[RMDB]
RNA sequence: GGGAACGACUCGAGUAGAGUCGAAAAUAAACACAGGAGGCAUACACACGUGUUAGCACGUUGCCCGUGUGUGCAAAUGGGCUAACCAGGCUUCUGAAGACUCUUACUCUGGCGGGGAGCCCAGACUGGUACCACAGCCCAGAGGGGCUGUUUAGACUACUUUUUCCCAAUUCGUUGGGAAAAAGUAAAAAGAAACAACAACAACAAC
Reactivity to 2A3 in 0.01 (KOAc 150mM, MgCl2 10mM, bicine 150mM(pH8.5), 24C), signal-to-noise 2, nucleotides 027 to 156: u090a020a030a000c070a000c010a130g040g020a030g080g040c070a050u140a090c060a030c020a030c140g050u080g010u210u080a060g000c040a020c150g030u050u050g030c020c020c020g130u120g020u010g000u060g030c020a020a080a100u060g000g010g020c010u030a020a000c000c010a030g100g000c000u040u040c020u120g090a060a050g010a010c010u010c020u030u040a030c000u010c020u070g050g000c010g010g040g030g060a020g010c000c050c000a010g030a030c040u060g030g060u050a060c010c070a020c050a050g020c030c060c060a130g100a090g190g080g000g000c000u010g000u020u030u090a040g000a020c040
Reactivity to DMS in 0.01 (KOAc 150mM, MgCl2 10mM, bicine 150mM(pH8.5), 24C), signal-to-noise 2, nucleotides 027 to 156: u020a100a110a090c060a100c040a040g030g010a090g000g000c050a190u040a110c060a100c120a070c060g000u000g000u000u010a090g060c020a050c050g040u000u000g000c000c020c000g010u000g020u010g030u000g020c010a050a090a060u000g010g040g010c000u020a090a050c020c040a130g000g030c040u000u000c010u000g000a150a180g010a080c030u030c020u010u010a060c020u010c070u000g010g020c040g000g000g000g000a120g000c040c000c020a100g000a120c070u000g020g010u010a070c020c070a070c020a070g030c050c000c000a100g010a110g000g010g020g000c000u000g020u000u000u000a080g000a280c060